[RMDB]
RNA sequence: GGGAACGACUCGAGUAGAGUCGAAAAUCAUUUUGGACUCCCAGUUGCCUCGAGGAAUGGAAGGUGGCUUGGAGAAGAUCGCCAACCUGGAGUACAGCAUGGUCCGCACUCGCGAAGAGACCACCGAACUACGCUGCAUGUUCGCAUGCAGCGUAGUAAAAGAAACAACAACAACAAC
Reactivity to DMS in 0.01 (KOAc 150mM, MgCl2 10mM, bicine 150mM(pH8.5), 24C), signal-to-noise 2, nucleotides 027 to 126: u030c090a130u000u000u000u000g020g000a270c010u000c020c030c080a040g020u010u000g020c060c000u000c050g010a080g010g030a190a110u000g010g000a190a100g020g020u000g020g020c010u020u000g000g000a160g010a090a020g000a110u000c100g000c070c030a050a150c110c020u000g020g000a040g030u000a070c090a040g020c040a110u000g000g000u000c050c000g000c090a080c060u000c130g020c000g000a090a190g000a110g000a120c050c050a090c070c030g000a120
Reactivity to 2A3 in 0.01 (KOAc 150mM, MgCl2 10mM, bicine 150mM(pH8.5), 24C), signal-to-noise 2, nucleotides 027 to 126: u040c020a010u020u090u140u170g070g040a010c000u010c000c000c010a010g000u010u090g000c020c000u010c070g100a080g070g190a290a080u180g000g110a090a070g000g030u020g020g000c000u020u030g000g010a050g010a040a060g030a110u150c050g030c050c010a080a070c000c040u010g020g020a040g090u070a080c020a000g100c040a030u100g000g020u000c010c000g000c030a080c040u070c050g050c030g020a070a070g040a010g020a060c020c000a000c010c030g010a030